Chemical mapping of a 177-nucleotide RNA with 2A3 and DMS. For DMS the reverse transcriptase was MarathonRT.
[RMDB]
RNA sequence: GGGAACGACUCGAGUAGAGUCGAAAAUCGCGCAAAGAUCGGCGAAGAGCAACGUCACGGUCGUGUUCCUGGGGGGCCCGGCAACUACCAUCCUGCUGGGCUAUCUGAUGCGCUGCGAUGCCGGUGCUGUCAUUACUCAGUUCGCUGAGUAAUGACAAAAAGAAACAACAACAACAAC
Reactivity to 2A3 in 0.01 (KOAc 150mM, MgCl2 10mM, bicine 150mM(pH8.5), 24C), signal-to-noise 2, nucleotides 027 to 126: u020c020g000c000g010c050a070a130a020g120a090u070c040g060g000c020g060a100a050g090a050g110c090a100a010c020g090u070c050a000c110g030g010u070c040g100u070g040u070u010c010c000u040g010g030g010g000g040g000c000c000c010g020g000c010a010a020c010u170a200c040c030a050u060c030c010u030g000c010u000g010g000g000c000u000a000u000c010u010g040a050u090g000c040g000c000u030g040c030g050a050u140g050c080c000g000g040u020g000c040
Reactivity to DMS in 0.01 (KOAc 150mM, MgCl2 10mM, bicine 150mM(pH8.5), 24C), signal-to-noise 4, nucleotides 027 to 126: u000c060g020c070g030c130a090a110a080g010a070u000c040g010g010c020g010a100a060g020a150g020c060a060a070c060g000u000c050a080c080g000g020u000c080g010u000g000u000u000c000c010u000g010g000g010g010g020g010c020c000c010g020g010c020a030a060c160u010a110c150c090a090u010c190c170u010g010c010u000g000g000g020c020u000a020u000c060u000g010a110u010g010c030g000c020u000g010c030g010a110u010g010c030c050g010g030u000g020c080